[RMDB]
RNA sequence: GGGAACGACUCGAGUAGAGUCGAAAAGAUAUGGAUUAAGGGAGCUGAGCCAUCGGAAACGAUGGAACAGCAUCGAUCUUACGGUCCUAAGUCAAAACGGGCGAAUGAGUUCGCUCAUUCGCCCGAAGUUUCACUCCUAGUUCGCUAGGAGUGAAACAAAAGAAACAACAACAACAAC
Reactivity to DMS in 0.01 (KOAc 150mM, MgCl2 10mM, bicine 150mM(pH8.5), 24C), signal-to-noise 1, nucleotides 027 to 126: g000a040u000a300u010g020g030a010u010u000a070a060g010g000g000a040g040c000u000g010a090g010c000c000a010u000c000g000g000a100a050a070c010g010a030u010g000g000a000a020c010a000g010c060a180u020c070g000a040u030c000u000u000a070c300g000g010u000c000c000u010a030a110g000u000c020a010a030a110a230c010g030g010g040c000g000a040a000u010g000a010g000u000u000c210g020c000u030c010a040u000u010c030g020c010c010c010g010a020a010